An RNA of 177 nucleotides, treated with 2A3 and read out base by base.

RNA sequence: GGGAACGACUCGAGUAGAGUCGAAAACUUCAAAACUACUUUUUAAGACCAUCCUUUUACAGUAUUUUUUCAAUAUUGUAAAACUUCUCAUUUACUUUGUGUCUUUAUGAUCUCAUCGUUCUGGUGGUACAAAGCGCUUCUUCGGAAGCGCUUUGUAAAAAGAAACAACAACAACAAC
Reactivity to 2A3 in 0.01 (KOAc 150mM, MgCl2 10mM, bicine 150mM(pH8.5), 24C), signal-to-noise 1, nucleotides 027 to 126: c000u060u050c120a030a000a030a060c040u110a070c030u130u120u110u080u160a030a010g030a090c000c000a070u070c010c010u000u010u010u010a000c000a000g040u000a000u010u000u000u080u060u140c020a000a000u010a010u010u010g000u010a000a000a000a000c030u150u000c030u000c050a180u130u140u130a140c030u000u040u060g060u000g060u040c040u040u080u100a140u210g100a030u000c020u030c070a040u010c050g130u110u000c050u070g000g000u000g010g100
Conditions: 150 mM KOAc, 10 mM MgCl2 and 150 mM bicine (pH 8.5), 24 C.